RNA sequence: GGGAACGACUCGAGUAGAGUCGAAAAUGGCACACGCCCGUAGUCCCAGCCACUUGAGGGGCUGAGGCACAAGAAUCACUUGAACUUGAGGCGGAGGUUGCAGUGAACUGAGAUCUCACCAUUGCACUCUAGCAUGGGUGACAGAGAGAGACUCCAACCUAUGCAUACUCUUCGGAGUAUGCAUAGGAAAAGAAACAACAACAACAAC
Reactivity to 2A3 in 0.01 (KOAc 150mM, MgCl2 10mM, bicine 150mM(pH8.5), 24C), signal-to-noise 5, nucleotides 027 to 156: u060g040g000c040a030c000a010c100g010c020c020c040g040u090a040g100u110c000c010c000a000g000c000c010a070c070u140u200g060a170g060g110g010g000c010u010g030a140g010g030c070a010c010a090a040g050a060a070u130c030a030c100u060u090g040a080a020c000u030u070g010a070g060g010c040g010g010a040g060g020u090u060g020c040a010g010u020g090a060a030c040u060g000a010g060a200u040c020u010c030a050c060c010a050u030u100g000c020a020c040u090c060u090a080g070c030a130u160g020g000g030u020g060a070c020a020g040a000g010a000g000a000g010a030c000u000c030c010a030a050
Reactivity to DMS in 0.01 (KOAc 150mM, MgCl2 10mM, bicine 150mM(pH8.5), 24C), signal-to-noise 2, nucleotides 027 to 156: u010g030g020c070a100c030a100c060g050c040c000c050g040u000a100g000u000c020c000c000a070g000c020c020a090c050u010u010g010a240g000g000g010g010c030u000g040a030g040g090c000a300c060a020a060g000a140a130u000c090a020c070u010u010g040a050a070c080u000u000g000a110g060g010c080g030g000a070g020g020u000u000g000c020a060g000u000g000a060a100c090u000g000a100g000a110u000c040u020c010a090c020c010a080u010u010g030c020a070c070u000c070u000a100g050c040a060u000g010g000g020u010g000a090c080a060g010a060g000a130g000a060g000a140c040u000c010c010a040a170